[RMDB]
RNA sequence: GGGAACGACUCGAGUAGAGUCGAAAAGUCCCCACUUUCGAGUGGGGACAAUCAAAGUUUUGGCACUCGCAGCCCGCAGCGUUGGUGCUCCCACGCGGUGGAUAACUGCCUACUUCGGUAGGCAGAAUCUGUAGUCACAAUUCGUUGUGACUACAGAAAAAGAAACAACAACAACAAC
Reactivity to DMS in 0.01 (KOAc 150mM, MgCl2 10mM, bicine 150mM(pH8.5), 24C), signal-to-noise 4, nucleotides 027 to 126: g000u000c000c000c000c000a010c000u010u000u010c150g010a010g050u000g000g000g000g000a000c000a000a040u000c130a090a090a100g000u000u000u000u010g010g020c040a060c040u000c070g000c060a080g010c030c020c020g010c070a090g010c050g010u010u000g010g000u010g000c110u000c090c010c020a070c090g000c060g000g020u000g010g010a150u010a050a220c000u000g010c000c000u000a010c000u000u030c140g030g020u000a000g000g000c000a000g000a040a050
Reactivity to 2A3 in 0.01 (KOAc 150mM, MgCl2 10mM, bicine 150mM(pH8.5), 24C), signal-to-noise 4, nucleotides 027 to 126: g010u000c000c000c020c000a000c010u080u100u060c200g110a010g010u010g000g000g000g010a000c000a000a000u090c020a010a040a090g050u050u080u150u160g050g000c030a010c040u050c040g060c030a020g060c020c010c010g000c030a030g000c010g040u070u090g050g010u090g020c030u070c010c000c000a010c030g120c060g060g050u080g030g030a050u080a170a110c000u000g000c000c010u010a000c000u020u070c250g080g000u000a000g010g010c000a000g000a000a030
Annotation:
Chemical mapping of a 177-nucleotide RNA with DMS and 2A3. The data come from the RNA Mapping Database (RMDB), library M2PK50. 2A3 adducts were read by reverse transcription with SuperScript II with manganese. For 2A3, 5,079 sequencing reads were counted. DMS adducts were read by reverse transcription with MarathonRT.